Conditions: 150 mM KOAc, 10 mM MgCl2 and 150 mM bicine (pH 8.5), 24 C. An RNA of 177 nucleotides, treated with 2A3 and DMS and read out base by base.
RNA sequence: GGGAACGACUCGAGUAGAGUCGAAAAGUGGUCGAGUGCGAAGCACUGGGGUAGAGAAAUAAAGAGAUAGAGAUCUUCCCCGUCAGUCAGUCACUCUCUGUCUGAAUCUCUCUCUCAAAGACCACGAGCGCACUACUAGGUUCGCCUAGUAGUGCGCAAAAGAAACAACAACAACAAC
Reactivity to 2A3 in 0.01 (KOAc 150mM, MgCl2 10mM, bicine 150mM(pH8.5), 24C), signal-to-noise 1, nucleotides 027 to 126: g000u020g000g040u010c000g030a060g030u020g000c140g140a300a060g010c000a020c010u000g000g000g040g010u150a010g000a030g020a040a180a000u270a010a080a000g180a000g000a000u000a020g050a000g030a050u000c010u060u010c030c020c020c020g130u150c050a030g050u050c010a000g000u050c040a010c050u040c000u000c000u000g000u030c000u020g100a140a100u050c000u000c000u020c000u000c000u010c000a110a050a000g000a000c000c000a000c020g050a000
Reactivity to DMS in 0.01 (KOAc 150mM, MgCl2 10mM, bicine 150mM(pH8.5), 24C), signal-to-noise 1, nucleotides 027 to 126: g010u000g010g000u000c000g000a050g000u000g000c040g010a150a150g000c010a000c000u000g010g040g000g000u000a010g000a040g030a000a130a070u030a080a150a140g000a000g000a000u000a050g000a010g010a030u050c170u000u000c030c000c030c010g020u000c210a030g010u010c110a050g020u000c110a100c200u000c060u000c000u000g000u000c000u000g000a200a180u000c110u000c000u000c000u000c000u000c070a030a080a100g000a010c000c000a000c000g010a060